[RMDB]
RNA sequence: GGGAACGACUCGAGUAGAGUCGAAAAGAUAUGGACAAAUCUCUUUUGACGCUCAAAAAGCAUCGGAAACGAUGUACAAAGAGCGAUAAGAGAUUGUCCUAAGUCAAAACCGCGGUUCGCCGCGGAACAUGUGUUUGAUCUUCGGAUCAAACACAUGAAAAGAAACAACAACAACAAC
Reactivity to DMS in 0.01 (KOAc 150mM, MgCl2 10mM, bicine 150mM(pH8.5), 24C), signal-to-noise 2, nucleotides 027 to 126: g000a020u020a300u000g000g040a000c000a070a030a080u010c010u000c000u010u000u010u020g030a210c100g020c010u010c000a050a090a070a180a220g000c000a000u000c000g000g000a040a030a100c000g000a010u000g060u000a010c190a090a110a150g010a020g060c000g010a060u010a020a000g000a020g030a030u000u000g000u000c000c000u000a020a070g000u000c020a020a030a060a120c000c000g000c000g010g020u000u030c180g020c030c000g010c010g000g000a040a040
Reactivity to 2A3 in 0.01 (KOAc 150mM, MgCl2 10mM, bicine 150mM(pH8.5), 24C), signal-to-noise 2, nucleotides 027 to 126: g010a010u050a010u090g000g020a000c030a050a260a290u000c000u000c000u080u100u090u270g290a160c040g010c000u010c010a120a110a040a050a000g030c000a000u000c000g030g000a030a020a000c000g010a000u010g000u050a000c020a000a180a050g010a000g000c040g020a020u110a010a000g010a010g000a000u000u010g010u000c000c000u000a060a010g020u020c020a020a040a120a170c010c000g020c040g000g070u040u070c300g010c150c010g000c010g030g020a010a000